[RMDB]
About this RNA
Chemical mapping of a 177-nucleotide RNA with 2A3 and DMS. The reactions ran in a buffer of 150 mM KOAc, 10 mM MgCl2 and 150 mM bicine (pH 8.5), at 24 C. For DMS, 1,445 sequencing reads were counted.
RNA sequence: GGGAACGACUCGAGUAGAGUCGAAAAGAAAGAAAUCAAAGCGGAUUCACUAAUCGGAUGAUCUACGAAUAACUCGUAGUGAGUGAUCCAAUAUCCGUAUUAGAUGUAACUGAGCAAUGAGUAGAAAGGGUUACAAUGAGUUCGCUCAUUGUAACCCAAAAGAAACAACAACAACAAC
Reactivity to 2A3 in 0.01 (KOAc 150mM, MgCl2 10mM, bicine 150mM(pH8.5), 24C), signal-to-noise 2, nucleotides 027 to 126: g110a000a000a000g100a020a100a020u050c000a070a000a000g000c030g000g000a050u140u090c040a000c040u050a010a020u010c010g000g000a000u000g000a040u000c000u000a010c030g000a030a190u190a210a160c050u000c000g020u050a020g010u010g030a020g120u300g140a050u080c040c030a000a050u090a000u000c000c000g050u050a070u000u030a050g030a070u000g060u220a050a000c080u070g100a000g040c020a130a200u070g000a040g080u080a030g000a220a050a000
Reactivity to DMS in 0.01 (KOAc 150mM, MgCl2 10mM, bicine 150mM(pH8.5), 24C), signal-to-noise 2, nucleotides 027 to 126: g000a090a180a200g020a020a130a070u000c020a000a040a220g000c000g000g000a000u030u000c000a120c000u000a020a000u030c020g000g020a020u010g050a120u030c000u000a070c000g010a000a150u000a130a100c290u000c000g000u090a000g000u000g000a200g000u000g020a060u000c240c110a060a220u080a000u000c000c000g000u050a040u010u000a000g000a250u000g010u030a020a080c040u040g020a210g000c010a020a050u000g000a030g000u100a100g030a070a180a080